[RMDB]
The data come from the RNA Mapping Database (RMDB), library M2RFPK. Structure probing data (2A3 and DMS) for a 207-nucleotide construct. For 2A3, 2,851 sequencing reads were counted.

RNA sequence: GGGAACGACUCGAGUAGAGUCGAAAAGAAAGAAGGAAAGAAGCCGGCUCUGCUAGUUUCACGGCAACCACGUUGAAAUUACAACGAAAGAAGCUCGCACUCAACUUCAACGGCUUAACGAGUGCAAAAAAGAAGUAUCACUUCGGUGAUACUUCAACAUGAGGAAUAUCUUCGGAUAUUCCUCAUGAAAAGAAACAACAACAACAAC
Reactivity to 2A3 in 0.01 (KOAc 150mM, MgCl2 10mM, bicine 150mM(pH8.5), 24C), signal-to-noise 3, nucleotides 027 to 156: g060a000a100a000g050a050a070g030g050a090a120a070g070a070a000g080c060c020g040g000c010u010c030u050g050c020u020a020g050u040u060u090c070a030c030g020g000c010a030a090c020c020a040c040g000u000u020g080a100a130a070u240u150a110c030a050a020c030g030a060a050a100g020a020a010g020c100u180c230g000c020a000c000u000c000a000a090c010u000u040c040a110a050c050g040g000c000u060u030a020a000c030g000a000g000u050g000c000a070a000a000a000a000a070g000a000a000g000u000a000u000c000a000c000u020u080c120g020g000u000g000a000u000a000c000u000u000c000a000a000
Reactivity to DMS in 0.01 (KOAc 150mM, MgCl2 10mM, bicine 150mM(pH8.5), 24C), signal-to-noise 1, nucleotides 027 to 156: g000a140a040a200g010a090a180g040g030a090a070a200g000a170a130g050c020c000g040g000c070u000c040u000g050c050u020a040g020u000u000u000c000a050c100g020g000c010a080a160c090c010a230c020g020u000u030g040a060a080a100u000u010a040c000a050a140c040g000a110a070a160g000a040a130g000c030u000c180g000c000a080c060u000c000a080a300c030u020u000c030a040a150c000g000g000c020u010u000a030a120c300g040a030g010u010g040c020a010a030a040a050a030a110g020a010a000g000u000a000u000c000a000c010u000u000c300g000g000u000g000a030u000a000c000u000u000c000a020a080
Values cover nucleotides 27 to 156. DMS adducts were read by reverse transcription with MarathonRT.